[RMDB]
RNA sequence: GGGAACGACUCGAGUAGAGUCGAAAAGUACUGAGGUUCGCCUCAGUACAAAAGCAGUUCUGAGCCUGCGAGCUCUCUGCCUAACUAGGGAACGCAAUAAAAAAACGUGCAUGUUCGCAUGCACGAACGAUGAAUCACGGUUCGCCGUGAUUCAUCGAAAAGAAACAACAACAACAAC
Reactivity to 2A3 in 0.01 (KOAc 150mM, MgCl2 10mM, bicine 150mM(pH8.5), 24C), signal-to-noise 3, nucleotides 027 to 126: g000u000a000c000u020g020a010g010g050u020u140c190g220c000c000u010c020a000g000u000a000c000a010a010a000a000g020c020a010g040u190u060c050u100g010a000g020c020c020u210g050c090g070a070g030c010u030c000u020c010u060g030c000c010u090a150a100c030u050a080g100g000g080a080a040c040g020c160a130a100u300a220a140a000a010a000a000a040c010g020u000g010c020a010u000g040u030u040c230g000c050a000u000g000c000a000c000g020a020a000
Reactivity to DMS in 0.01 (KOAc 150mM, MgCl2 10mM, bicine 150mM(pH8.5), 24C), signal-to-noise 1, nucleotides 027 to 126: g010u000a000c010u000g000a000g010g000u000u000c170g030c000c030u000c000a010g000u000a000c020a010a090a120a120g000c020a050g020u000u010c080u010g010a030g000c060c030u000g010c180g000a240g020c000u000c000u000c060u000g000c010c070u000a070a110c100u010a060g010g010g000a070a060c080g010c100a070a070u050a030a000a080a020a090a050a090c010g000u000g010c000a000u010g000u010u010c240g050c000a020u000g020c000a010c020g000a020a030
Background: Structure probing data (2A3 and DMS) for a 177-nucleotide construct. The 2A3 profile rests on 2,337 reads. DMS adducts were read by reverse transcription with MarathonRT.